Chemical mapping of a 177-nucleotide RNA with 2A3. It was measured as part of the RMDB library OK1LIB.
RNA sequence: GGGAACGACUCGAGUAGAGUCGAAAACAACCGUGGCGUGAUCUGCUCAAACAGCUUGGCAAGCAACAGAUCACACCGGCGGGGACGACGAUCGUGUUCGCCGCCGCGCCGGUGAUCGUCGCCGGGACCUUACGCGGGGCUUCGGCCCCGCGUAAGGAAAAGAAACAACAACAACAAC
Reactivity to 2A3 in 0.01 (KOAc 150mM, MgCl2 10mM, bicine 150mM(pH8.5), 24C), signal-to-noise 1, nucleotides 027 to 126: c070a010a000c010c000g120u100g000g110c040g030u030g010a000u000c000u000g000c040u080c230a150a160a130c110a050g000c000u080u130g010g000c070a050a000g000c000a000a000c000a000g030a000u000c020a000c000a000c060c000g000g000c000g050g030g180g000a050c020g000a000c000g000a120u040c100g070u230g030u300u080c000g000c000c020g200c000c000g140c000g030c000c000g020g010u000g000a080u080c070g000u000c000g000c020c000g040g030g000a030